[RMDB]
RNA sequence: GGGAACGACUCGAGUAGAGUCGAAAAGGGAGGGCGUCGUCACUGAGAACGGCAACUUCAUAGGCAUGAUCCUGGAGAAGAUCGAUGGCAAGCAGCCCAGCAAGCGCCUGAAUGAGUCAUCCUUCAACAGACAUCAUCCAUUCGUGGAUGAUGUCUGAAAAGAAACAACAACAACAAC
Reactivity to DMS in 0.01 (KOAc 150mM, MgCl2 10mM, bicine 150mM(pH8.5), 24C), signal-to-noise 3, nucleotides 027 to 126: g010g000g020a070g010g020g000c090g020u000c020g000u000c030a070c200u030g010a100g030a080a070c080g020g000c050a090a160c070u000u000c030a080u000a060g010g000c070a090u000g050a080u000c030c010u000g000g000a110g020a110a060g000a040u000c060g000a080u000g010g000c080a030a090g010c100a080g000c020c030c010a080g000c110a080a100g000c080g000c050c000u000g000a070a080u000g020a080g040u000c030a080u000c010c030u010u020c120a070a140
Reactivity to 2A3 in 0.01 (KOAc 150mM, MgCl2 10mM, bicine 150mM(pH8.5), 24C), signal-to-noise 2, nucleotides 027 to 126: g060g010g020a050g030g000g020c050g010u020c010g020u000c020a050c140u180g050a000g030a200a030c020g010g000c030a020a020c020u090u060c010a050u110a090g020g010c000a060u090g050a030u110c020c040u030g090g000a120g010a120a000g010a010u050c040g050a030u080g040g000c010a030a060g000c010a030g000c020c000c030a010g000c040a050a020g050c030g040c030c000u050g070a090a050u130g030a000g050u010c010a040u020c020c000u070u130c030a050a030